[RMDB]
RNA sequence: GGGAACGACUCGAGUAGAGUCGAAAACGUCGAGGCCGCGCGCGCGGGCGAACAGGGGCGCGGCUUCGCGGUGGUCGCGGGCGAGGUGCGCACGCUCGCGCAGCGCAGCGCGACGGCGGCGCGCGAAGUCGCUGCUAGUCUUCGGACUAGCAGCGACAAAAGAAACAACAACAACAAC
Reactivity to DMS in 0.01 (KOAc 150mM, MgCl2 10mM, bicine 150mM(pH8.5), 24C), signal-to-noise 2, nucleotides 027 to 126: c030g010u010c010g030a030g030g020c020c010g020c000g010c000g000c050g020c050g020g000g000c010g000a100a110c150a140g020g010g010g020c020g000c020g020g000c010u000u000c000g010c020g030g000u000g010g010u000c040g020c030g010g010g000c030g010a060g000g010u000g000c010g000c000a160c050g010c040u000c020g020c010g010c040a030g010c060g010c060a050g000c040g000c000g010a060c100g000g020c030g000g000c010g040c010g020c060g020a100a110
Reactivity to 2A3 in 0.01 (KOAc 150mM, MgCl2 10mM, bicine 150mM(pH8.5), 24C), signal-to-noise 1, nucleotides 027 to 126: c020g050u040c010g030a020g030g030c010c000g000c000g000c020g040c030g010c030g040g090g000c080g030a110a040c060a140g080g070g010g040c030g010c010g020g030c010u010u010c000g000c010g000g050u070g040g010u130c040g000c000g040g000g000c030g020a040g090g080u110g050c000g000c020a010c030g020c010u010c020g010c000g020c000a050g030c010g000c030a040g020c010g010c020g010a010c000g090g030c010g050g050c040g010c010g000c020g030a080a030